Background
An RNA of 177 nucleotides, treated with 2A3 and DMS and read out base by base. For DMS the reverse transcriptase was MarathonRT. For 2A3 the reverse transcriptase was SuperScript II with manganese. The 2A3 profile rests on 20,451 reads.
RNA sequence: GGGAACGACUCGAGUAGAGUCGAAAAUAGCCGGCGAGCAUGUCGAGGUCGUGGAUAUGCAGGUCGGCGUCGCGGUGGGCGGCGGCGAUGUCGGCAUCGUAGACCUCAUCCAGCCAGUAGUUCGCGAAGGUAAUAUCGUAUUCGUACGAUAUUACCUAAAAGAAACAACAACAACAAC
Reactivity to 2A3 in 0.01 (KOAc 150mM, MgCl2 10mM, bicine 150mM(pH8.5), 24C), signal-to-noise 8, nucleotides 027 to 126: u130a020g090c020c020g060g000c010g010a020g020c050a060u060g030u130c090g030a040g010g030u040c050g090u200g100g040a110u040a030u200g040c040a020g050g030u010c000g020g160c000g000u000c000g000c020g030g280u260g120g260g010c010g000g000c000g010g060c000g000a000u040g110u170c040g040g020c010a000u020c010g020u020a030g010a000c000c000u000c000a000u000c000c010a000g040c010c020a040g090u110a020g000u040u030c020g000c030g090a050
Reactivity to DMS in 0.01 (KOAc 150mM, MgCl2 10mM, bicine 150mM(pH8.5), 24C), signal-to-noise 9, nucleotides 027 to 126: u010a140g020c020c020g000g010c020g010a120g020c060a070u000g010u010c120g010a040g010g010u000c020g010u000g020g010a090u000a030u010g010c030a100g010g010u000c000g010g000c000g020u000c000g020c020g020g030u020g020g010g010c010g010g010c010g000g000c010g000a010u000g000u010c040g010g010c010a030u000c040g010u000a250g000a020c010c010u000c010a090u010c060c090a150g000c060c050a080g010u000a080g010u000u000c030g010c060g010a170